Structure probing data (DMS and 2A3) for a 177-nucleotide construct. Values cover nucleotides 27 to 126.
[RMDB]
RNA sequence: GGGAACGACUCGAGUAGAGUCGAAAAGGUGGGUGGGUGAUGGCGUGCCUUUUGAAGAAUGAGCCUGCGAGUUAGCGGCAUGUCGCGAGGUUAACCCGUGUGGGGUAGCCGUAGCGAAAGCGAGUCCAACCGAUAUCGUGUUCGCACGAUAUCGGUUAAAAGAAACAACAACAACAAC
Reactivity to DMS in 0.01 (KOAc 150mM, MgCl2 10mM, bicine 150mM(pH8.5), 24C), signal-to-noise 2, nucleotides 027 to 126: g000g020u020g010g020g000u040g020g020g000u010g010a050u020g010g000c050g010u020g030c070c010u020u000u000u010g000a120a070g030a060a070u020g010a100g010c010c060u010g040c050g000a110g030u010u020a100g000c100g000g010c020a060u020g000u000c020g020c010g000a240g000g000u010u000a060a030c000c000c000g060u020g020u040g020g000g000g010u010a010g000c000c000g000u060a220g010c010g000a020a050a100g010c040g000a110g000u020c030c120
Reactivity to 2A3 in 0.01 (KOAc 150mM, MgCl2 10mM, bicine 150mM(pH8.5), 24C), signal-to-noise 3, nucleotides 027 to 126: g150g000u180g080g040g020u200g030g000g030u120g070a130u080g050g000c020g110u020g000c000c000u020u130u080u140g200a180a070g100a000a070u100g000a020g060c000c040u040g010c050g000a100g110u100u100a080g060c010g000g000c010a030u130g010u000c000g000c000g010a040g000g000u040u080a200a120c040c000c000g020u120g100u260g010g000g000g000u000a000g010c000c000g050u020a000g010c000g020a010a010a000g010c030g010a020g010u000c000c000
It was measured as part of the RMDB libraries RFM100 and RFMREP. For 2A3 the reverse transcriptase was SuperScript II with manganese. In probing experiments dimethyl sulfate is read out at A N1 and C N3, which are open when not base-paired.